This 177-nucleotide RNA was probed chemically with DMS and 2A3. The DMS profile rests on 2,386 reads. For 2A3 the reverse transcriptase was SuperScript II with manganese. For DMS the reverse transcriptase was MarathonRT. The 2A3 profile rests on 2,638 reads. The RNA was probed in 150 mM KOAc, 10 mM MgCl2 and 150 mM bicine (pH 8.5) at 24 C.
RNA sequence: GGGAACGACUCGAGUAGAGUCGAAAACGACAGGUUACGGGCGAUCCCAUAAAACAGGAACUCUGAGCCGGUAAUCUUGUGCUUGAUGGAGUUCUUGGUGAAGAUGAAUUCGCCAUUAUACUCUGAGAGCGUGUAAUCAAUUCGUUGAUUACACGCUAAAAGAAACAACAACAACAAC
Reactivity to DMS in 0.01 (KOAc 150mM, MgCl2 10mM, bicine 150mM(pH8.5), 24C), signal-to-noise 3, nucleotides 027 to 126: c080g010a150c070a040g000g020u000u000a050c100g000g010g000c000g010a090u000c040c020c010a100u000a050a080a100a140c300a080g000g020a050a050c090u010c140u000g020a190g000c000c000g000g000u000a040a040u010c030u010u010g040u000g010c050u010u000g010a170u000g010g000a010g000u000u000c030u010u010g000g030u000g000a040a040g020a220u000g000a110a120u000u000c010g000c000c000a030u000u000a030u010a020c010u010c000u010g010a170g000
Reactivity to 2A3 in 0.01 (KOAc 150mM, MgCl2 10mM, bicine 150mM(pH8.5), 24C), signal-to-noise 3, nucleotides 027 to 126: c020g050a030c010a010g000g040u020u010a010c080g100g010g020c030g010a060u030c000c000c000a030u120a000a070a000a000c040a020g040g030a050a070c050u020c060u300g010a030g020c020c020g120g020u000a000a060u020c040u050u090g050u060g030c030u020u130g070a160u300g010g010a000g000u020u000c000u020u020g000g010u020g050a020a030g080a160u300g090a030a300u050u020c000g000c000c000a000u010u010a050u010a010c010u050c020u030g050a070g050